[RMDB]
About this RNA
This 177-nucleotide RNA was probed chemically with DMS and 2A3. For DMS the reverse transcriptase was MarathonRT. The RNA was probed in 150 mM KOAc, 10 mM MgCl2 and 150 mM bicine (pH 8.5) at 24 C.

RNA sequence: GGGAACGACUCGAGUAGAGUCGAAAAGCCACGACAACGUGGUGGUGGUGUGCUCGAUCGAAAACGUCGACCCGAUGGGUGUGCACACCGGCGACUCGGUCACCGUCGCGCCGGCGAUGACGUUGACCCGUAAGGAUGAGUUCGCUCAUCCUUACGGAAAAGAAACAACAACAACAAC
Reactivity to DMS in 0.01 (KOAc 150mM, MgCl2 10mM, bicine 150mM(pH8.5), 24C), signal-to-noise 6, nucleotides 027 to 126: g000c000c000a020c010g020a210c300a140a120c020g040u000g000g000u010g020g020u000g010g010u000g020u000g010c000u000c030g000a030u000c070g010a070a070a080a140c260g010u000c010g000a080c050c020c010g010a100u010g010g010g000u010g000u000g000c010a020c010a020c020c000g000g010c050g010a030c050u000c050g000g000u000c010a030c020c000g010u000c030g000c090g010c110c100g000g010c020g010a070u000g000a040c060g000u010u000g000a080c070
Reactivity to 2A3 in 0.01 (KOAc 150mM, MgCl2 10mM, bicine 150mM(pH8.5), 24C), signal-to-noise 4, nucleotides 027 to 126: g020c000c010a010c020g090a050c050a300a080c050g010u020g030g000u010g020g090u120g030g000u020g040u030g000c000u020c080g050a130u030c070g060a090a060a050a130c050g070u020c010g030a070c000c000c010g020a190u230g030g010g030u100g050u080g000c010a010c000a000c030c000g010g040c030g020a050c010u010c040g010g000u070c010a030c080c000g010u020c020g000c020g040c110c000g090g020c030g020a070u090g010a010c040g040u060u080g040a060c000